[RMDB]
RNA sequence: GGGAACGACUCGAGUAGAGUCGAAAAGUAGCAGCAGACAUGCGCAUGAUUACAUGUGAUGUAAUCCCUUGAGUUAUAAGAACGUCCUAAGGGAACAGUGGAGCGUGAUUGAGCUCGAGAAUCAUGGAGUUGCUUCCUUAUUCGUAAGGAAGCAACUAAAAGAAACAACAACAACAAC
Reactivity to DMS in 0.01 (KOAc 150mM, MgCl2 10mM, bicine 150mM(pH8.5), 24C), signal-to-noise 4, nucleotides 027 to 126: g000u010a090g000c080a080g020c060a080g000a060c040a030u010g020c050g010c060a060u010g000a060u010u030a100c070a050u010g010u010g010a100u010g000u000a040a080u000c020c140c000u000u020g000a040g010u000u000a120u010a030a030g000a110a010c060g010u010c030c010u000a190a130g000g000g050a110a090c040a060g030u020g010g010a050g010c030g010u000g000a210u010u010g010a070g000c000u010c000g000a040g000a060a070u000c070a010u000g000g000
Reactivity to 2A3 in 0.01 (KOAc 150mM, MgCl2 10mM, bicine 150mM(pH8.5), 24C), signal-to-noise 1, nucleotides 027 to 126: g130u120a030g000c050a000g000c000a000g000a080c000a020u080g040c010g000c040a020u000g000a040u020u020a050c000a030u080g010u020g010a030u060g000u000a000a010u020c060c000c000u000u050g010a000g010u020u020a160u000a190a030g010a000a000c020g030u000c000c000u060a080a050g040g000g000a000a010c000a030g130u100g030g030a010g040c000g040u030g020a050u010u060g020a000g000c000u000c020g030a010g020a050a000u020c000a000u030g030g000